[RMDB]
RNA sequence: GGGAACGACUCGAGUAGAGUCGAAAACAGUUAAUAGCCCAUUUUCCUACUACUUGAGGAAAAGCUUGAACUUGCCACACUUUCAAUGCUUUGGCUCGUUCUUCUAAAGCUAUAUUGAUUUGAAAGCGCUAGGGAGAAUAUUCGUAUUCUCCCUAGCAAAAGAAACAACAACAACAAC
Reactivity to DMS in 0.01 (KOAc 150mM, MgCl2 10mM, bicine 150mM(pH8.5), 24C), signal-to-noise 4, nucleotides 027 to 126: c110a050g010u000u000a050a060u000a060g010c000c030c040a300u010u010u000u000c000c000u000a130c080u010a110c170u030u000g010a020g010g000a030a000a020a060g020c120u000u000g000a020a030c020u000u000g030c020c020a040c230a100c060u000u000u000c190a090a050u010g010c140u000u000u000g010g040c070u000c040g000u000u000c020u000u000c120u000a090a170a080g010c020u000a050u000a100u000u000g010a080u010u010u010g010a090a090a120g010c200
Reactivity to 2A3 in 0.01 (KOAc 150mM, MgCl2 10mM, bicine 150mM(pH8.5), 24C), signal-to-noise 5, nucleotides 027 to 126: c020a020g010u070u090a060a030u020a170g020c000c000c000a010u010u000u010u010c030c020u050a300c020u040a140c060u190u160g050a020g000g000a010a020a010a000g020c010u040u080g000a010a010c000u010u040g020c030c000a030c010a030c060u100u220u210c120a160a140u080g070c080u080u040u010g010g010c010u000c020g020u020u000c000u060u010c080u150a180a080a000g000c010u000a000u000a040u180u070g090a110u080u070u220g170a170a100a000g110c070